[RMDB]
RNA sequence: GGGAACGACUCGAGUAGAGUCGAAAACGAGCACACUGAGUUCCAUCAACUUAUCUCAAGAGCUCAAUCGGCUGCGAAUUGACGGGUCAGUGCGGUCGCCAGUCGGUACUCCUGCCUUGCCAGACUCUGUACAACCACGCUUCGGCGUGGUUGUACAAAAAGAAACAACAACAACAAC
Reactivity to 2A3 in 0.01 (KOAc 150mM, MgCl2 10mM, bicine 150mM(pH8.5), 24C), signal-to-noise 2, nucleotides 027 to 126: c020g000a000g020c010a000c000a010c020u000g000a000g030u120u080c060c000a110u130c030a040a250c060u170u100a140u120c010u000c040a020a010g010a030g030c000u000c000a000a080u030c010g000g020c000u020g010c010g040a120a080u070u110g040a030c020g020g010g000u050c010a010g040u080g160c000g090g000u020c020g050c050c010a010g010u000c010g020g060u010a130c020u000c000c000u010g050c000c000u010u070g030c030c000a040g010a030c000u060c030
Reactivity to DMS in 0.01 (KOAc 150mM, MgCl2 10mM, bicine 150mM(pH8.5), 24C), signal-to-noise 1, nucleotides 027 to 126: c000g000a010g000c030a300c040a120c030u000g000a000g000u000u130c100c220a190u000c180a120a200c070u000u000a030u160c010u060c110a040a050g000a090g000c000u000c000a190a050u000c090g000g010c000u000g000c000g010a300a170u000u000g000a130c150g000g000g000u000c000a040g000u110g000c000g010g050u000c010g000c020c000a000g020u000c000g000g000u000a020c110u000c020c060u000g040c020c110u000u020g170c030c070a060g000a030c220u000c000